[RMDB]
RNA sequence: GGGAACGACUCGAGUAGAGUCGAAAAAAAAAAGAUAUGGAUCCAGAGAACGCUCAUUUAGCGACGAAGUACCUUCGGAAACGAAGGUACAGAGCUGGAUGAGCGACUGGAUCCUAAGUCAAAAAAACCUAUAUACUCAGUUCGCUGAGUAUAUAGGAAAAGAAACAACAACAACAAC
Reactivity to 2A3 in 0.01 (KOAc 150mM, MgCl2 10mM, bicine 150mM(pH8.5), 24C), signal-to-noise 1, nucleotides 027 to 126: a020a000a000a000a010a050g050a030u090a040u090g000g000a000u010c010c000a000g060a000g090a300a080c020g000c010u010c010a010u000u000u030a020g040c060g300a300c060g010a210a000g000u010a000c000c000u000u000c000g010g010a020a040a010c000g000a000a010g000g000u000a010c000a000g010a010g000c000u000g030g010a000u000g000a000g000c000g000a010c010u000g000g000a000u010c000c000u000a000a000g000u000c020a000a000a000a050a300a000a050
Reactivity to DMS in 0.01 (KOAc 150mM, MgCl2 10mM, bicine 150mM(pH8.5), 24C), signal-to-noise 2, nucleotides 027 to 126: a050a020a080a120a100a160g010a050u010a300u000g000g000a000u010c000c000a000g000a090g010a100a080c020g010c000u000c000a010u000u000u000a030g010c000g000a200c300g010a140a130g000u000a000c000c010u000u020c030g000g000a080a040a140c000g010a010a000g000g000u000a000c000a020g010a150g010c000u010g010g000a020u000g000a010g010c000g000a010c020u000g000g010a010u000c020c000u010a000a030g000u010c010a000a000a110a100a090a120a200